The record gives the reactivity of an RNA of 207 nucleotides to DMS and 2A3.
Reactivities are given for positions 27 through 156.
For 2A3 the reverse transcriptase was SuperScript II with manganese.
RNA sequence: GGGAACGACUCGAGUAGAGUCGAAAAUAGGCGAACGAGAGGCCCUCUCGUGUGCGGAGUUGUCACGCUGACAAAAUUGUUAUGAUGUCCGAUUCCGGUAGCAUCGCGGCGAUGCUUUCAUAGGACAUCUUAUGAACCCAAGCGCUUCGGGGAAGCAGGAUAUGAGUGGUUUCGACCACUCAUAUCCAAAAGAAACAACAACAACAAC
Reactivity to DMS in 0.01 (KOAc 150mM, MgCl2 10mM, bicine 150mM(pH8.5), 24C), signal-to-noise 2, nucleotides 027 to 156: u010a100g020g020c030g000a080a050c020g010a100g040a030g050g020c080c060c030u000c000u000c020g020u010g000u000g020c080g010g010a230g030u000u000g000u000c050a130c100g040c040u000g010a190c060a050a090a120a100u000u000g000u000u000a080u000g000a050u000g000u010c000c000g010a240u000u000c160c060g030g020u000a030g010c000a010u000c010g060c110g040g010c110g010a020u000g000c000u000u000u000c020a080u000a140g010g000a060c050a050u000c010u000u000a050u000g010a140a190c010c020c020a070a080g000c080g010c060u000u000c010g010g000g060g050a100a070g010c030a160
Reactivity to 2A3 in 0.01 (KOAc 150mM, MgCl2 10mM, bicine 150mM(pH8.5), 24C), signal-to-noise 1, nucleotides 027 to 156: u120a030g030g000c030g030a050a040c000g010a000g020a020g080g100c020c020c060u020c010u010c010g040u040g030u040g020c040g030g060a040g060u080u090g030u050c030a000c180g020c030u000g040a020c090a040a060a030a020u160u110g080u090u090a080u130g020a000u000g000u000c000c040g040a050u080u030c100c100g040g010u030a020g000c000a000u000c030g070c120g290g030c160g000a010u030g040c000u090u040u040c100a060u060a050g030g000a000c000a000u000c000u000u020a030u020g040a020a020c070c000c000a080a010g040c030g000c000u060u100c140g050g000g000g020a030a010g040c100a040